[RMDB]
RNA sequence: GGGAACGACUCGAGUAGAGUCGAAAAGACUACUGUUGGCAUGUGACACACUGUCGUAUAUGUGGUUUGAAUAUGCCUUACGACCCGUUGAAAGGAUCUGGGAGAACAGUAAUGUCAUCCUUGACCCAGGUUCAAGGUAGUUCGCUACCUUGAACCUAAAAGAAACAACAACAACAAC
Reactivity to 2A3 in 0.01 (KOAc 150mM, MgCl2 10mM, bicine 150mM(pH8.5), 24C), signal-to-noise 2, nucleotides 027 to 126: g010a000c030u010a010c000u060g010u010u040g040g000c020a020u010g020u010g130a070c010a000c010a000c060u080g120u250c170g090u290a180u040a040u300g010u010g020g020u040u050u030g020a030a010u000a000u000g020c000c000u030u040a070c080g150a150c000c020c000g070u050u110g140a140a170a140g040g020a030u080c100u180g000g040g000a090g030a020a000c010a010g000u070a060a090u100g010u010c010a060u010c020c000u000u110g130a110c000c020c030
Reactivity to DMS in 0.01 (KOAc 150mM, MgCl2 10mM, bicine 150mM(pH8.5), 24C), signal-to-noise 3, nucleotides 027 to 126: g020a050c010u000a000c020u000g010u000u010g020g020c010a010u030g020u000g000a150c070a030c010a010c020u000g020u020c240g030u000a090u010a060u000g000u010g000g000u010u000u000g000a300a030u020a030u010g020c000c000u010u020a130c130g000a050c000c000c020g000u020u020g010a110a110a070g010g020a030u010c030u000g010g000g000a300g010a090a020c020a010g000u010a050a140u000g010u000c020a080u010c020c000u010u000g040a100c030c030c040